Conditions: 150 mM KOAc, 10 mM MgCl2 and 150 mM bicine (pH 8.5), 24 C. Structure probing data (2A3 and DMS) for a 177-nucleotide construct. 2A3 adducts were read by reverse transcription with SuperScript II with manganese. High 2A3 reactivity points to a flexible backbone, as in loops and unpaired stretches.
[RMDB]
RNA sequence: GGGAACGACUCGAGUAGAGUCGAAAACAUCAGGAGGACCUUCCGCGCACUUCCAAGCAGGAGCUUUCCUUCCAAGCGCACUUCCAAUCUACUCGAGAGGAGGAGGAGGAGGAGGAUUCCCUCAAAACACUGUAUUUGCUUUCGAGCAAAUACAGUGAAAAGAAACAACAACAACAAC
Reactivity to 2A3 in 0.01 (KOAc 150mM, MgCl2 10mM, bicine 150mM(pH8.5), 24C), signal-to-noise 2, nucleotides 027 to 126: c030a070u170c070a050g080g040a010g030g020a040c010c010u070u020c050c060g060c010g000c050a040c040u210u000c060c020a070a030g050c040a030g060g030a020g000c050u050u120u080c010c000u070u060c010c000a080a020g020c010g000c040a040c060u040u000c020c000a000a110u010c000u040a050c040u030c060g030a020g000a030g040g020a040g030g050a030g010g010a020g000g000a020g010g020a010g020g000a000u030u050c040c000c000u050c010a060a110a020a020
Reactivity to DMS in 0.01 (KOAc 150mM, MgCl2 10mM, bicine 150mM(pH8.5), 24C), signal-to-noise 3, nucleotides 027 to 126: c050a080u000c110a140g020g000a060g030g020a090c300c020u000u000c020c040g020c080g010c050a110c070u000u000c090c090a060a140g010c080a110g010g000a040g000c110u000u010u000c010c030u000u000c020c050a070a160g020c040g000c110a140c030u010u000c020c050a110a130u010c030u000a020c050u000c050g000a000g000a240g000g000a070g000g010a100g030g040a050g030g020a060g000g000a030g000g000a140u000u010c000c000c010u020c150a070a050a120a140